RNA sequence: GGGAACGACUCGAGUAGAGUCGAAAAGAUAUGGAGCCUCACCAGCGAAGAACUCGGAAACGAGGGAGCUGCGUGACAUGGCUCCUAAGUCAAAACCAGUCCGAAGAGUUCGCUCUUCGGACUGGAACUAGGUUACCAUGUUCGCAUGGUAACCUAGAAAAGAAACAACAACAACAAC
Reactivity to 2A3 in 0.01 (KOAc 150mM, MgCl2 10mM, bicine 150mM(pH8.5), 24C), signal-to-noise 2, nucleotides 027 to 126: g030a010u080a070u200g020g000a010g020c010c000u030c000a000c000c010a000g010c030g170a300a050g000a080a040c010u010c010g020g040a100a070a060c000g000a020g020g040g000a010g000c010u010g040c080g050u010g000a020c040a130u140g000g000c000u010c000c000u000a000a010g030u000c020a010a000a060a100c000c000a000g000u000c000c000g020a010a000g030a010g070u140u200c300g080c160u010c000u000u000c000g000g000a000c000u010g000g000a000a000
Reactivity to DMS in 0.01 (KOAc 150mM, MgCl2 10mM, bicine 150mM(pH8.5), 24C), signal-to-noise 2, nucleotides 027 to 126: g010a040u010a300u010g000g000a000g010c000c000u000c000a000c000c000a030g000c000g000a080a120g010a120a200c010u000c010g010g010a110a050a250c000g000a030g010g000g000a080g000c000u000g010c200g020u000g020a060c300a110u000g020g000c010u000c000c000u000a010a070g000u010c020a100a070a130a190c000c000a020g000u000c000c000g010a000a010g000a030g000u000u030c300g000c000u000c000u000u000c000g010g000a000c010u010g000g000a000a060
An RNA of 177 nucleotides, treated with 2A3 and DMS and read out base by base. Conditions: 150 mM KOAc, 10 mM MgCl2 and 150 mM bicine (pH 8.5), 24 C. For 2A3 the reverse transcriptase was SuperScript II with manganese.